[RMDB]
RNA sequence: GGGAACGACUCGAGUAGAGUCGAAAACAAAGGCAGAAGUGAAGGUGGUGCUCUCCAGAUGGGGCUGUAAACGCUGCGUCCUGUGUGCUCUGCCUGGGAUGGCUCGCCCUGGACACCAGCCCUGGCCCGGAUUUUCUGAAUUCGUUCAGAAAAUCCGAAAAGAAACAACAACAACAAC
Reactivity to DMS in 0.01 (KOAc 150mM, MgCl2 10mM, bicine 150mM(pH8.5), 24C), signal-to-noise 2, nucleotides 027 to 126: c100a090a110a090g020g010c030a040g010a090a110g010u010g030a080a130g020g010u000g000g010u000g000c090u010c080u020c030c030a070g010a140u010g010g000g010g020c020u000g010u000a040a100a100c250g010c060u010g010c120g010u000c010c000u000g000u000g020u010g020c030u020c080u000g010c000c020u000g020g010g020a050u000g020g010c050u000c110g000c000c000c000u010g010g010a050c030a060c120c030a040g000c000c030c000u000g000g020c050c060
Reactivity to 2A3 in 0.01 (KOAc 150mM, MgCl2 10mM, bicine 150mM(pH8.5), 24C), signal-to-noise 2, nucleotides 027 to 126: c040a040a070a040g040g000c030a020g010a250a020g040u040g060a100a030g080g030u020g020g000u040g040c030u000c020u000c030c020a020g020a160u130g000g000g000g000c020u030g050u170a150a110a060c050g000c080u080g000c020g050u020c010c000u070g050u050g070u110g060c050u040c100u200g000c010c000u030g000g030g010a080u090g020g030c040u020c030g010c000c010c040u010g000g020a010c000a010c010c010a020g030c090c000c010u030g040g000c010c010
The record gives the reactivity of an RNA of 177 nucleotides to DMS and 2A3. The reactions ran in a buffer of 150 mM KOAc, 10 mM MgCl2 and 150 mM bicine (pH 8.5), at 24 C. It was measured as part of the RMDB library OK2TRN. For DMS, 2,521 sequencing reads were counted. For 2A3, 1,679 sequencing reads were counted.